Chemical mapping of a 207-nucleotide RNA with 2A3. It was measured as part of the RMDB library M2RFPK. For 2A3 the reverse transcriptase was SuperScript II with manganese.
RNA sequence: GGGAACGACUCGAGUAGAGUCGAAAAGUACGUAGAGUGUCGGCAAGCUCUAUAUAUGGACACUUACGAAGGGUUUUGGUUGUUUUGUAUCUCAAGCCGACUUUGAGUAUUUGAGGAAAAUGCGACAUGAAUCCUGUGACGUUCGCGUCACAGGAAAGCUAAAUCGUUUCUUCGGAAACGAUUUAGCAAAAGAAACAACAACAACAAC
Reactivity to 2A3 in 0.01 (KOAc 150mM, MgCl2 10mM, bicine 150mM(pH8.5), 24C), signal-to-noise 1, nucleotides 027 to 156: g080u070a020c040g000u000a030g000a020g170u070g020u050c050g030g070c100a060a120g020c020u000c070u070a070u050a010u000a030u210g190g000a080c090a000c050u080u090a010c120g040a040a050g080g070g000u010u050u200u180g090g000u000u020g000u010u020u020u030g090u040a120u000c030u000c060a010a000g010c000c000g020a000c000u070u020u050g020a050g010u050a050u030u130u160g000a070g000g060a000a060a030a030u050g040c000g000a050c060a110u080g030a020a080u000c000c000u000g000u000g000a020c020g040u020u020c170g000c000g050u000c010a000c000a000g000g000a000a000a000